Chemical mapping of a 207-nucleotide RNA with DMS.
[RMDB]
RNA sequence: GGGAACGACUCGAGUAGAGUCGAAAACUCCAGAUUCGUCUGGAGAAAAAACCGUAGGACGCGAUGAAAUUCCAGGGAGAUGGCAUUCGAAAGAGUGCAGCAUCAUCGAUCUGGAAUGGAGCGUCCUAAACGGAAAAAAUCCCGAUUCGUCGGGAAAGGUAGUAUGAGGUUUCGACCUCAUACUACCAAAAGAAACAACAACAACAAC
Reactivity to DMS in 0.01 (KOAc 150mM, MgCl2 10mM, bicine 150mM(pH8.5), 24C), signal-to-noise 1, nucleotides 027 to 156: c000u010c000c000a040g000a080u000u000c300g040u000c000u000g000g020a060g040a010a030a020a070a010a040c020c000g040u010a020g000g000a050c000g020c000g020a200u020g010a180a010a000u010u000c000c010a000g020g000g000a300g010a070u000g070g050c000a040u000u000c010g010a230a120a160g000a000g060u000g020c010a240g010c110a050u010c090a080u000c000g040a300u020c000u000g040g000a010a020u010g000g000a140g000c010g000u000c000c000u020a000a020a110c000g000g040a000a030a140a050a120a120u000c000c000c000g000a060u020u000c190g000u000c060g000g050g000a010a020a010
DMS (dimethyl sulfate) methylates the pairing face of unpaired adenines and cytosines.